Structure probing data (DMS) for a 177-nucleotide construct.
DMS adducts were read by reverse transcription with MarathonRT.
The RNA was probed in 150 mM KOAc, 10 mM MgCl2 and 150 mM bicine (pH 8.5) at 24 C.
The data come from the RNA Mapping Database (RMDB), library OK2TRN.

[RMDB]
RNA sequence: GGGAACGACUCGAGUAGAGUCGAAAAGAAAGGGACCCCUGCCAGGGGAGCGUCGGUCAGCACCCCACGCAUAUUUUUUUAUGCCGCUGACACCCCUCGACGCAGCAGGAGGGGUGGUCCCGAAAGAGGGAGGGAUAUGAUUCGUCAUAUCCCUCCCAAAAGAAACAACAACAACAAC
Reactivity to DMS in 0.01 (KOAc 150mM, MgCl2 10mM, bicine 150mM(pH8.5), 24C), signal-to-noise 1, nucleotides 027 to 126: g010a120a130a220g020g010g000a030c060c000c020c050u000g020c020c070a180g000g000g010g010a060g050c010g030u000c060g010g000u000c010a020g000c020a130c100c040c030c040a100c230g020c000a000u010a000u000u000u010u000u030u020u000a000u000g020c040c070g000c010u000g020a030c020a190c030c000c010c050u000c050g000a010c020g000c030a090g040c120a090g000g020a050g000g000g000g020u010g010g030u000c080c010c000g000a070a080a040g010a130